[RMDB]
RNA sequence: GGGAACGACUCGAGUAGAGUCGAAAAUACGCCAAUUUCGAUUGGCGUAACACGCAAACCGGCCGAAAGGGAUUUUAUGCGUACGGUGGCGAAAGCCUAAAAACGCACUGUCAUUCGUGACAGUGAAAGUUAACCUUCAGUUCGCUGAAGGUUAACUAAAAGAAACAACAACAACAAC
Reactivity to 2A3 in 0.01 (KOAc 150mM, MgCl2 10mM, bicine 150mM(pH8.5), 24C), signal-to-noise 3, nucleotides 027 to 126: u030a000c010g000c000c000a010a000u030u070u130c190g160a010u010u000g000g000c010g000u000a000a010c020a010c020g000c020a090a100a050c000c000g050g000c010c010g080a130a060a020g120g040g000a050u050u100u020u070a120u140g030c010g000u020a110c030g060g000u020g020g020c010g040a090a020a010g000c000c020u100a090a060a020a020a010c080g020c010a010c010u000g010u000c010a020u010u070c160g120u000g000a020c010a010g000u010g040a110a030
Reactivity to DMS in 0.01 (KOAc 150mM, MgCl2 10mM, bicine 150mM(pH8.5), 24C), signal-to-noise 3, nucleotides 027 to 126: u000a010c000g000c000c010a010a010u000u000u020c180g010a020u000u010g000g020c000g010u000a010a060c110a120c040g020c040a040a080a090c050c010g010g030c000c010g000a040a050a090g010g010g010a140u020u000u010u000a060u010g020c090g030u000a060c080g010g020u000g000g000c010g010a090a080a120g000c010c020u000a020a030a040a100a080c230g010c010a020c010u010g000u010c000a040u010u010c230g020u010g000a030c000a010g010u000g000a020a060
The data come from the RNA Mapping Database (RMDB), library M2PK50. An RNA of 177 nucleotides, treated with 2A3 and DMS and read out base by base. Values are in units of 0.01, from 0 to 300, in steps of 10. For 2A3, 4,448 sequencing reads were counted. The reactions ran in a buffer of 150 mM KOAc, 10 mM MgCl2 and 150 mM bicine (pH 8.5), at 24 C.